[RMDB]
Notes:
The record gives the reactivity of an RNA of 177 nucleotides to 2A3 and DMS. For 2A3, 15,992 sequencing reads were counted. Values cover nucleotides 27 to 126. The RNA was probed in 150 mM KOAc, 10 mM MgCl2 and 150 mM bicine (pH 8.5) at 24 C.
RNA sequence: GGGAACGACUCGAGUAGAGUCGAAAAGAAUUUAUAGCUGAUGCAGUGCUUUAAGCGUAUAUAUGUGCGACUUUAAGAAUGAUACUUGCAGUGGUAUCUAUGAAGAUAGGCAGGCUAUCAUAGAAAGAUGAUGAAUAAUAUUCGUAUUAUUCAUCAUAAAAGAAACAACAACAACAAC
Reactivity to 2A3 in 0.01 (KOAc 150mM, MgCl2 10mM, bicine 150mM(pH8.5), 24C), signal-to-noise 6, nucleotides 027 to 126: g050a050a080u060u140u040a090u050a020g020c010u040g060a110u030g000c020a030g060u020g140c000u020u030u050a040a010g000c010g030u000a020u000a010u020a030u200g080u010g020c030g060a200c060u010u010u040a030a010g010a020a060u060g010a000u010a010c000u000u080g060c040a020g030u010g040g000u030a010u000c010u000a070u070g090a040a020g050a050u040a030g040g040c010a000g010g000c000u030a010u060c020a040u060a030g100a060a060a000g120
Reactivity to DMS in 0.01 (KOAc 150mM, MgCl2 10mM, bicine 150mM(pH8.5), 24C), signal-to-noise 9, nucleotides 027 to 126: g000a100a080u020u010u020a050u010a050g010c020u000g010a090u010g010c020a070g010u020g010c010u010u010u000a040a050g000c010g020u010a030u010a130u050a070u050g020u000g000c020g000a090c020u000u010u010a050a040g010a110a060u010g000a040u020a030c010u000u010g010c120a080g030u010g010g010u000a010u000c000u000a080u020g010a070a050g010a060u020a060g010g010c020a070g000g000c080u000a010u000c100a030u010a070g000a070a100a080g010